[RMDB]
The record gives the reactivity of an RNA of 177 nucleotides to DMS and 2A3.
For 2A3 the reverse transcriptase was SuperScript II with manganese.
RNA sequence: GGGAACGACUCGAGUAGAGUCGAAAAAGCUGGCGAUACGUCGCCAGCAAGAUCGCGGCCGCAGCCGCCUAGGUGGCGGCCGCUCAUGUGCCCCCUCCAGGGGGUACACGCGGAUACGUCCGCGUGACAAAGAGCACGAAUUCGUUCGUGCUCUUUGAAAAGAAACAACAACAACAAC
Reactivity to DMS in 0.01 (KOAc 150mM, MgCl2 10mM, bicine 150mM(pH8.5), 24C), signal-to-noise 1, nucleotides 027 to 126: a150g010c000u000g010g000c000g000a000u010a040c300g000u010c010g000c000c030a020g110c020a070a060g000a120u040c110g040c040g030g050c000c030g050c050a100g000c000c000g050c260c100u030a040g000g030u000g000g000c000g000g090c000c010g000c020u010c040a040u000g000u000g000c000c000c030c000c000u030c090c110a300g000g030g000g000g000u000a000c000a030c040g000c010g000g040a030u010a160c120g000u010c000c010g000c000g010u000g000a100
Reactivity to 2A3 in 0.01 (KOAc 150mM, MgCl2 10mM, bicine 150mM(pH8.5), 24C), signal-to-noise 2, nucleotides 027 to 126: a000g000c010u010g010g010c020g000a010u030a080c270g080u010c010g010c010c000a000g000c010a000a010g030a030u130c040g020c020g000g000c000c000g000c010a010g010c000c030g100c200c140u220a080g000g000u040g040g000c000g000g020c020c000g010c000u010c000a030u030g040u020g010c000c000c020c000c020u050c120c100a150g000g000g000g010g010u000a010c000a010c000g000c000g030g000a030u020a050c230g050u020c000c000g000c010g000u020g000a000